Annotation
Conditions: 150 mM KOAc, 10 mM MgCl2 and 150 mM bicine (pH 8.5), 24 C. This 207-nucleotide RNA was probed chemically with 2A3 and DMS. The 2A3 profile rests on 1,057 reads.
RNA sequence: GGGAACGACUCGAGUAGAGUCGAAAAAUGGUCUAUCAAAACGAUUGGGAAGUCAAUGGUAUUUGUUUUGACCCCUACCAAUUCGGAACGCUACUCACAAUGAUUGAAAAAAGGCAUCCAGAAUGGCCUCUAAUCGAAGUUUCGCAGACGACAAUGGCGUAUGCCACCGAUUCGUCGGUGGCAUACGAAAAGAAACAACAACAACAAC
Reactivity to 2A3 in 0.01 (KOAc 150mM, MgCl2 10mM, bicine 150mM(pH8.5), 24C), signal-to-noise 3, nucleotides 027 to 156: a020u100g030g000u020c060u060a070u040c100a000a020a030a030c010g090a050u030u030g020g020g010a170a050g060u070c000a030a010u010g050g010u230a300u150u070u120g130u010u050u010u060g000a000c010c000c000c010u000a050c040c020a090a080u240u050c000g000g020a070a010c030g000c030u030a030c020u020c000a070c040a060a110u140g130a110u080u110g170a140a080a000a010a000a010g030g000c040a030u070c090c030a060g090a150a060u070g030g030c020c000u010c030u030a020a030u050c040g030a120a020g000u010u020u030c050g000c040a020g020a100c070g010a010c060a040a030u070g040g010
Reactivity to DMS in 0.01 (KOAc 150mM, MgCl2 10mM, bicine 150mM(pH8.5), 24C), signal-to-noise 1, nucleotides 027 to 156: a110u000g010g040u000c200u010a140u000c040a100a030a040a050c030g000a100u000u010g010g030g010a130a120g040u000c000a040a170u000g000g040u000a090u000u000u000g030u000u010u060u010g070a150c050c010c070c030u010a130c000c000a040a080u000u000c000g030g000a180a080c070g000c030u010a060c000u000c030a170c090a090a150u000g010a130u000u030g000a000a000a090a100a070a050g030g020c030a010u000c040c020a290g010a110a120u000g020g030c010c010u000c000u000a080a150u020c020g020a090a120g000u000u010u000c000g040c040a140g070a080c010g020a120c040a040a130u000g010g000